[RMDB]
RNA sequence: GGGAACGACUCGAGUAGAGUCGAAAAACUAUCGAUGAAGUCGUCGCCUCUCUCCAUGAGAUAGAAGCUUUGCGAGAUCAACUUCCCAUGGAAAUCGAUGGUGUGGUGAUCAAAGUAGAUGAUAUAGAGCUAAAUGGGAAUUCGUUCCCAUUUAGCUAAAAGAAACAACAACAACAAC
Reactivity to DMS in 0.01 (KOAc 150mM, MgCl2 10mM, bicine 150mM(pH8.5), 24C), signal-to-noise 5, nucleotides 027 to 126: a060c040u000a050u000c020g000a090u010g010a090a100g010u000c040g030u000c100g010c040c020u000c060u010c040u000c020c040a060u000g000a100g010a060u000a060g020a090a120g010c100u000u000u000g020c100g020a170g010a070u000c040a080a120c050u000u000c010c000c000a050u010g010g000a050a070a050u000c080g010a030u010g000g010u000g030u010g020g010u000g010a060u000c030a050a070a150g010u010a050g000a080u000g010a090u000a100u000a120g000
Reactivity to 2A3 in 0.01 (KOAc 150mM, MgCl2 10mM, bicine 150mM(pH8.5), 24C), signal-to-noise 4, nucleotides 027 to 126: a020c070u060a030u060c010g040a040u060g080a070a020g040u030c030g040u060c030g030c010c000u030c020u000c000u020c040c020a060u080g020a030g000a190u130a130g070a090a030g010c060u140u190u150g050c050g060a090g030a130u080c010a000a050c000u030u010c000c000c000a000u050g030g000a010a190a090u080c050g010a020u090g000g060u060g020u050g050g060u070g040a060u050c020a030a050a070g040u060a050g030a070u070g050a010u060a030u070a190g190